Source: RMDB library M2PK90, as collected in RNAgym. Chemical mapping of a 177-nucleotide RNA with 2A3 and DMS. For DMS the reverse transcriptase was MarathonRT. For DMS, 703 sequencing reads were counted. The reactions ran in a buffer of 150 mM KOAc, 10 mM MgCl2 and 150 mM bicine (pH 8.5), at 24 C.
RNA sequence: GGGAACGACUCGAGUAGAGUCGAAAACACAGGCGACUUAAUCGCAGAGCGGUUACACGCGAGGAAGAUGAAAUUAUUACAUCAGUAGACUCGAGAUUACUACAACUUGCGUUGCUAUCUCAAAUAAUGUAUGGAUCUACUUCGGUAGAUCCAUACAAAAAGAAACAACAACAACAAC
Reactivity to 2A3 in 0.01 (KOAc 150mM, MgCl2 10mM, bicine 150mM(pH8.5), 24C), signal-to-noise 1, nucleotides 027 to 126: c130a010c000a000g120g030c010g040a020c050u040u120a090a130u040c020g020c070a050g000a000g020c020g000g040u030u060a030c000a000c080g060c040g000a010g070g050a130a100g030a010u050g100a120a100a140u180u120a080u100u090a100c000a030u000c000a000g060u050a040g040a010c040u010c120g060a060g010a120u110u300a050c000u030a000c000a030a000c000u070u000g020c010g050u040u100g020c020u080a130u160c040u000c000a110a090a060u180a060a090
Reactivity to DMS in 0.01 (KOAc 150mM, MgCl2 10mM, bicine 150mM(pH8.5), 24C), signal-to-noise 1, nucleotides 027 to 126: c080a070c120a180g000g000c000g000a110c150u000u020a040a210u000c050g000c010a080g000a170g040c180g030g000u000u010a120c120a030c070g000c010g000a080g000g000a080a120g000a010u000g000a050a030a080u000u020a090u000u000a040c000a120u000c000a110g020u000a030g010a150c030u000c050g000a100g000a090u000u000a030c010u020a020c080a250a050c020u000u000g000c100g000u000u000g030c040u000a090u000c000u000c040a050a020a010u000a040a090